[RMDB]
RNA sequence: GGGAACGACUCGAGUAGAGUCGAAAAGGAUAAACUGACUGCAUCUACAAAAAGUGAGCUGAGGAGUUGUGCAAAGAUGAUCACUCUAUCUGGACCUACAUCCAACAAAGAUGCAUAUUCGUCAGCCAGGAGUGGCUUAAUUCGUUAAGCCACUCCUAAAAGAAACAACAACAACAAC
Reactivity to DMS in 0.01 (KOAc 150mM, MgCl2 10mM, bicine 150mM(pH8.5), 24C), signal-to-noise 2, nucleotides 027 to 126: g010g000a160u010a050a200a110c040u010g000a040c050u000g010c010a010u000c000u000a110c170a020a040a070a090a090g020u000g000a070g000c040u000g000a100g050g010a080g000u010u000g030u000g000c180a130a050a080g000a040u000g010a140u000c050a110c080u000c010u000a030u020c070u010g030g050a180c140c050u010a060c180a250u010c020c010a040a110c220a060a050a050g010a060u000g040c030a070u020a090u000u000c070g000u000c020a020g010c100c070
Reactivity to 2A3 in 0.01 (KOAc 150mM, MgCl2 10mM, bicine 150mM(pH8.5), 24C), signal-to-noise 1, nucleotides 027 to 126: g150g000a100u180a010a120a000c010u050g000a010c000u020g000c000a010u020c020u070a130c070a110a300a020a000a020g120u070g050a100g000c060u090g050a020g090g040a050g050u020u190g000u150g120c050a030a090a160g030a070u080g020a020u110c050a020c070u020c020u020a180u120c060u020g010g030a000c000c010u020a010c020a100u000c050c040a010a000c000a030a300a010g010a000u000g000c020a000u050a080u140u170c080g000u000c010a000g090c060c010
Conditions: 150 mM KOAc, 10 mM MgCl2 and 150 mM bicine (pH 8.5), 24 C. Chemical mapping of a 177-nucleotide RNA with DMS and 2A3. For DMS the reverse transcriptase was MarathonRT. The data come from the RNA Mapping Database (RMDB), library OK2TRN.